An RNA of 177 nucleotides, treated with 2A3 and read out base by base. It was measured as part of the RMDB library M2PK50. Values cover nucleotides 27 to 126.
RNA sequence: GGGAACGACUCGAGUAGAGUCGAAAAGACCAAUCGUUCGCGAUUGGUCAAAACGUGGAUGCUACGCUACCGAAGUAGCAAAAGUGCAGCUACAAAGCACAAAAACUUGGUUGUUCGCAACCAAGAAGGCGUACUUCUUGUUCGCAAGAAGUACGCCAAAAGAAACAACAACAACAAC
Reactivity to 2A3 in 0.01 (KOAc 150mM, MgCl2 10mM, bicine 150mM(pH8.5), 24C), signal-to-noise 1, nucleotides 027 to 126: g000a020c000c010a000a000u000c050g090u140u060c300g020c020g090a030u030u040g000g080u000c000a000a040a000a000c100g060u040g130g010a050u080g000c020u050a040c070g030c080u030a100c090c000g170a250a070g000u030a020g000c000a020a020a020a020g000u020g030c020a040g040c010u090a150c110a100a060a020g030c080a060c140a050a030a010a020a010c000u030u030g010g040u000u000g030u000u020c200g000c050a000a000c000c070a000a000g000a000a020
Description:
The reactions ran in a buffer of 150 mM KOAc, 10 mM MgCl2 and 150 mM bicine (pH 8.5), at 24 C.